Record summary: The record gives the reactivity of an RNA of 177 nucleotides to 2A3. Source: RMDB library OK1LIB, as collected in RNAgym. For 2A3 the reverse transcriptase was SuperScript II with manganese. 2A3 is a SHAPE reagent: it acylates the 2'-hydroxyl of flexible nucleotides of all four kinds.
RNA sequence: GGGAACGACUCGAGUAGAGUCGAAAAUCUGAACGUCAACAUAUCUACCAACCAUUAAUAGAUCAGUUACUAGCAGAAGAUAAAGCAUAUAAAUGCUAUAUGACAGAAGAAGAAUUAGAAGCUGAACGCUCCGGUAGAGAUUCGUCUCUACCGGAGCAAAAGAAACAACAACAACAAC
Reactivity to 2A3 in 0.01 (KOAc 150mM, MgCl2 10mM, bicine 150mM(pH8.5), 24C), signal-to-noise 1, nucleotides 027 to 126: u030c000u020g000a020a000c000g020u130c160a050a000c000a000u110a000u100c000u080a000c000c040a130a200c080c000a000u000u300a070a040u150a000g100a090u070c000a000g050u000u150a050c000u000a040g000c000a000g040a090a000g020a090u130a270a220a000g050c030a000u090a000u040a000a220a110u080g000c000u000a000u000a040u300g000a000c100a000g070a130a000g040a020a000g090a110a050u170u220a090g040a050a020g000c000u000g000a150a000c050